Description:
This 177-nucleotide RNA was probed chemically with DMS and 2A3. The 2A3 profile rests on 1,461 reads. 2A3 adducts were read by reverse transcription with SuperScript II with manganese.

[RMDB]
RNA sequence: GGGAACGACUCGAGUAGAGUCGAAAAAAUUUAAAGUAAGGCUGAUUAUAUAACACGAUUUUUGUGAACUUGUCAUCGCUAUGAUGACUGGUAAAACGAUAUUGCCUUAUUCACAUCGUAAGAAUUCAAUAUUGGAGGAGUUCGCUCCUCCAAUAUUAAAAGAAACAACAACAACAAC
Reactivity to DMS in 0.01 (KOAc 150mM, MgCl2 10mM, bicine 150mM(pH8.5), 24C), signal-to-noise 5, nucleotides 027 to 126: a080a060u020u020u000a090a100a050g020u010a010a010g010g000c000u020g010a050u010u020a080u020a060u010a090a170c080a040c070g000a110u020u020u020u030u010g010u000g000a160a020c020u000u000g000u000c000a000u010c000g030c300u050a050u040g010a010u000g000a000c000u010g000g000u000a050a040a070a080c180g000a040u010a030u000u010g010c020c000u000u000a000u000u000c170a090c200a060u010c120g010u020a120a080g010a130a110u030u000c120
Reactivity to 2A3 in 0.01 (KOAc 150mM, MgCl2 10mM, bicine 150mM(pH8.5), 24C), signal-to-noise 3, nucleotides 027 to 126: a000a000u190u280u180a070a060a000g000u000a000a000g000g000c000u000g090a120u130u050a100u090a030u040a180a050c060a000c130g040a070u000u010u040u190u160g090u000g050a030a040c000u040u040g000u000c000a000u000c010g060c180u100a140u300g000a000u000g000a000c000u010g000g000u000a070a060a000a070c000g010a000u000a040u140u180g000c000c000u000u000a000u010u100c080a050c010a100u020c010g050u090a000a030g040a050a050u130u060c010